[RMDB]
RNA sequence: GGGAACGACUCGAGUAGAGUCGAAAAAGUGCACUAGGUACGCCUAGUGCACAUUCCAGGACAUACUGCUGAGGAUGUCAAAAAUGCAGUUGGAGUCCUCAACUGGAUAGGCUAAGGCCUAUCCAGAAAAAGACUUGGUUGUUCGCAACCAAGUCAAGUAAGCCAAAAAGUUCGCUUUUUGGCUUACAAAAGAAACAACAACAACAAC
Reactivity to DMS in 0.01 (KOAc 150mM, MgCl2 10mM, bicine 150mM(pH8.5), 24C), signal-to-noise 1, nucleotides 027 to 156: a140g050u010g020c000a010c010u010a020g020g000u010a060c300g080c000c000u000a050g010u000g020c000a010c000a020u010u000c010c020a210g020g000a020c050a050u000a060c030u000g000c060u030g010a090g020g010a050u010g000u030c030a010a050a080a080a230u010g020c020a070g060u000u000g010g000a300g010u000c000c000u010c020a080a130c000u000g010g010a010u000a020g020g030c000u010a130a180g080g010c030c000u000a000u010c010c000a000g010a020a070a100a150a130g000a040c010u000u000g010g010u000u000g000u000u000c250g010c030a000a030c030c000a030a010g010u010c000a010a060
Reactivity to 2A3 in 0.01 (KOAc 150mM, MgCl2 10mM, bicine 150mM(pH8.5), 24C), signal-to-noise 1, nucleotides 027 to 156: a010g000u000g000c000a000c000u010a020g040g000u020a010c120g090c010c000u000a000g000u000g020c000a000c000a000u000u000c000c000a010g000g000a010c020a050u160a010c010u030g040c000u020g040a080g090g130a300u260g300u300c140a080a050a040a050a040u110g000c000a000g010u030u040g070g050a150g040u000c000c010u040c010a060a080c010u010g000g000a000u000a000g000g000c010u100a090a200g160g010c000c000u000a000u010c000c000a000g010a000a000a000a000a010g000a000c000u000u000g000g030u020u000g020u030u100c120g000c050a000a000c000c000a000a000g000u000c000a000a010
The record gives the reactivity of an RNA of 207 nucleotides to DMS and 2A3. Reactivities are given for positions 27 through 156. Values are in units of 0.01, from 0 to 300, in steps of 10.